[RMDB]
RNA sequence: GGGAACGACUCGAGUAGAGUCGAAAACGGCCACCGCCGGCCGCGGUGAUGUUCUUCAGCCAGUCGCGGUUCGGACCGUAGGUGAGCAAAAUCGCCACGCCCGCCCGGCCGUCGACGUCCGCGCUGAACGAUAGUUUCGGUUCGCCGAAACUAUCGUAAAAGAAACAACAACAACAAC
Reactivity to 2A3 in 0.01 (KOAc 150mM, MgCl2 10mM, bicine 150mM(pH8.5), 24C), signal-to-noise 1, nucleotides 027 to 126: c020g030g010c030c000a010c010c030g070c020c110g110g050c060c030g000c010g010g060u110g020a140u130g040u110u000c000u030u040c030a010g030c050c010a010g000u030c010g000c000g000g060u220u300c030g030g010a030c000c050g030u070a130g000g000u050g000a050g050c070a050a040a010a150u070c000g010c010c010a020c030g050c000c060c060g030c000c000c000g000g030c000c020g080u200c040g000a010c020g050u060c140c030g000c000g000c000u020g010a020
Reactivity to DMS in 0.01 (KOAc 150mM, MgCl2 10mM, bicine 150mM(pH8.5), 24C), signal-to-noise 2, nucleotides 027 to 126: c080g010g010c160c010a070c070c040g000c070c110g020g010c140c070g020c020g000g000u000g020a080u000g020u000u010c030u010u000c000a000g000c050c040a110g010u000c030g020c010g010g010u000u030c010g010g010a050c100c070g000u010a080g040g030u000g000a030g000c090a110a060a110a150u000c010g020c010c020a050c000g000c210c090c100g000c060c020c000g010g020c000c000g000u020c020g000a010c010g000u010c140c160g030c130g030c000u000g000a030

Conditions: 150 mM KOAc, 10 mM MgCl2 and 150 mM bicine (pH 8.5), 24 C. An RNA of 177 nucleotides, treated with 2A3 and DMS and read out base by base. DMS adducts were read by reverse transcription with MarathonRT. Values cover nucleotides 27 to 126.